[RMDB]
RNA sequence: GGGAACGACUCGAGUAGAGUCGAAAAGAUGCGGGUCCUCAGGCUACAACACAGGACCCGGGCGCUCCUCUGACCCCUCGUGUCUUGUGUUGCAGCCGGAGGGACGCUGAGUGCGCCUUCGGGCGCAGGUCAAUAAUGAAUUCGUUCAUUAUUGACCAAAAGAAACAACAACAACAAC
Reactivity to 2A3 in 0.01 (KOAc 150mM, MgCl2 10mM, bicine 150mM(pH8.5), 24C), signal-to-noise 4, nucleotides 027 to 126: g100a030u150g000c020g050g090g300u040c000c000u010c010a000g000g000c000u020a010c000a010a000c010a000c000a010g000g010a010c000c060c030g010g000g000c060g000c010u080c030c040u140c220u220g120a130c000c000c000c020u030c020g030u020g000u000c000u000u000g000u000g000u020u000g000c010a000g010c000c000g000g010a000g000g000g010a000c000g000c000u010g060a090g090u090g000c000g000c010c000u040u080c220g110g000g000c010g000c010a010
Reactivity to DMS in 0.01 (KOAc 150mM, MgCl2 10mM, bicine 150mM(pH8.5), 24C), signal-to-noise 4, nucleotides 027 to 126: g010a130u000g010c010g010g000g010u000c000c000u000c000a050g000g010c000u000a020c000a010a010c000a010c030a010g000g010a020c000c040c050g000g000g000c200g020c150u000c050c170u020c190u010g000a130c090c040c050c020u000c010g000u000g000u000c000u000u000g020u000g010u000u000g010c020a010g010c010c000g010g010a020g000g010g000a020c000g000c000u010g000a130g010u000g010c000g000c000c000u000u010c200g030g010g010c000g040c010a010